Chemical mapping of a 177-nucleotide RNA with 2A3 and DMS. It was measured as part of the RMDB library TTRDES. The reactions ran in a buffer of 150 mM KOAc, 10 mM MgCl2 and 150 mM bicine (pH 8.5), at 24 C.

RNA sequence: GGGAACGACUCGAGUAGAGUCGAAAAGAUAUGGAUCAAUACAGGGAGCUGUGUGGUCGGAAACGACCACCAGCGACGAUCUGUAUGAUCCUAAGUCAAAACGGUGCUAUUGUUCGCAAUAGCACCGCUAUGUUUGUUCCUUCGGGAACAAACAUAGAAAAGAAACAACAACAACAAC
Reactivity to 2A3 in 0.01 (KOAc 150mM, MgCl2 10mM, bicine 150mM(pH8.5), 24C), signal-to-noise 2, nucleotides 027 to 126: g000a000u050a010u150g010g000a010u000c040a200a130u110a020c000a000g030g050g050a110g010c010u020g090u080g000u000g300g000u000c000g020g000a070a050a020c010g000a010c000c000a000c010c000a000g010c020g000a030c020g000a010u000c000u000g010u000a000u020g010a000u000c000c000u010a080a000g040u020c030a000a000a110a140c030g000g000u000g010c000u000a000u020u010g060u130u110c300g000c230a000a000u000a000g000c000a000c000c000g010
Reactivity to DMS in 0.01 (KOAc 150mM, MgCl2 10mM, bicine 150mM(pH8.5), 24C), signal-to-noise 3, nucleotides 027 to 126: g000a020u010a300u000g010g000a010u000c000a070a070u000a020c010a020g010g000g010a070g020c000u010g010u010g030u000g020g020u000c010g000g000a050a060a120c010g010a000c010c000a010c000c000a000g020c000g010a040c300g010a040u000c010u010g000u000a010u000g010a010u010c010c000u000a010a090g010u010c010a100a070a110a300c030g010g010u000g000c000u000a010u000u000g010u010u010c280g020c010a020a010u000a010g000c000a000c010c010g000